Record summary
Chemical mapping of a 177-nucleotide RNA with DMS and 2A3. For 2A3, 1,590 sequencing reads were counted. High 2A3 reactivity points to a flexible backbone, as in loops and unpaired stretches. The RNA was probed in 150 mM KOAc, 10 mM MgCl2 and 150 mM bicine (pH 8.5) at 24 C. It was measured as part of the RMDB library OK2TST.
[RMDB]
RNA sequence: GGGAACGACUCGAGUAGAGUCGAAAAUGCACACCUAUGAGGCGGUAAACCGGCGGAUCAACAAUGUCGUUCGUGGCCUCAUCGCGGUCGGGGUGCGGCAGGGUGACCGUGUCGGCGUGCUGAUGGACUAACCGAUGUCUUUCGAGACAUCGGUUAGAAAAGAAACAACAACAACAAC
Reactivity to DMS in 0.01 (KOAc 150mM, MgCl2 10mM, bicine 150mM(pH8.5), 24C), signal-to-noise 2, nucleotides 027 to 126: u000g010c040a050c010a060c030c000u000a070u010g020a010g030g030c020g010g010u000a040a080a080c140c050g010g010c010g020g030a110u010c080a120a070c240a100a120u030g010u000c050g010u010u010c070g000u000g010g010c030c000u000c030a020u010c100g000c060g000g050u000c020g000g020g000g000u010g020c070g000g010c030a070g010g010g010u020g000a050c040c020g030u010g020u010c130g000g000c100g040u000g000c010u010g020a120u000g000g010a300
Reactivity to 2A3 in 0.01 (KOAc 150mM, MgCl2 10mM, bicine 150mM(pH8.5), 24C), signal-to-noise 2, nucleotides 027 to 126: u110g020c000a030c010a030c000c010u020a090u110g050a020g050g000c060g010g210u200a090a000a020c050c000g000g020c060g040g040a150u130c020a020a140c060a070a130u170g020u120c000g030u220u080c020g090u080g090g010c000c000u030c030a020u010c060g020c030g010g000u040c030g070g030g000g050u150g030c000g050g010c070a030g000g010g060u110g020a020c020c000g040u020g050u030c040g040g040c040g000u010g000c020u070g030a110u120g040g030a020

Notes: For DMS the reverse transcriptase was MarathonRT.